RNA sequence: GGGAACGACUCGAGUAGAGUCGAAAAGGGGUCUUACUUAUGGUCGGCAACUUCUUUUGACGAGCUGAAGCCUCCACGGCUCGAUAAGAAGUUGAACUACCGACCAGGUAAGACGGAGGCACCCAAAGCCAAACGUUCGUUCGCGAACGUUUGGCAAGACUAUGCCUACGUUCGCGUAGGCAUAGUCAAAAGAAACAACAACAACAAC
Reactivity to 2A3 in 0.01 (KOAc 150mM, MgCl2 10mM, bicine 150mM(pH8.5), 24C), signal-to-noise 1, nucleotides 027 to 156: g080g000g010g010u020c000u020u000a010c010u080u130a060u240g000g000u000c000g020g040c010a010a000c000u000u030c000u000u210u160u170g190a160c070g000a000g000c000u010g010a090a040g050c010c000u010c000c010a020c000g000g000c000u000c020g070a070u080a120a170g000a000a000g000u010u000g010a010a000c030u080a100c020c000g000a000c000c000a000g010g000u010a000a000g000a000c010g000g020a010g010g000c020a070c000c010c000a030a000a110g010c000c010a010a010a000c000g000u000u000c000g040u060u110c300g000c000g130a010a010c000g000u010u010u000g010g000c000a000a000